Conditions: 150 mM KOAc, 10 mM MgCl2 and 150 mM bicine (pH 8.5), 24 C. Chemical mapping of a 177-nucleotide RNA with 2A3. Reactivities are given for positions 27 through 126.

[RMDB]
RNA sequence: GGGAACGACUCGAGUAGAGUCGAAAAUAUGUUCACUAAAUUCGUUAUGAAACACGAUGAAUCUCUUAUGAUCGUCACUAUCUCUGCAUAGAGUUCUUAAUCUCGUGUACACCGGAUAUGACUUGUACGGUCGACGCUAGUUCGCUAGCGUCGACCGAAAAGAAACAACAACAACAAC
Reactivity to 2A3 in 0.01 (KOAc 150mM, MgCl2 10mM, bicine 150mM(pH8.5), 24C), signal-to-noise 1, nucleotides 027 to 126: u300a090u090g090u000u010c000a010c000u190a000a000a250u080u120c030g000u210u080a180u210g210a040a000a180c000a000c000g060a000u250g000a000a000u060c060u040c000u170u020a070u270g000a000u070c000g090u000c000a150c030u300a300u010c000u000c040u000g020c000a000u000a130g000a000g000u000u000c000u000u060a160a060u000c060u000c070g120u000g000u110a010c120a000c000c000g000g000a000u100a130u030g150a000c000u070u190g060u080a000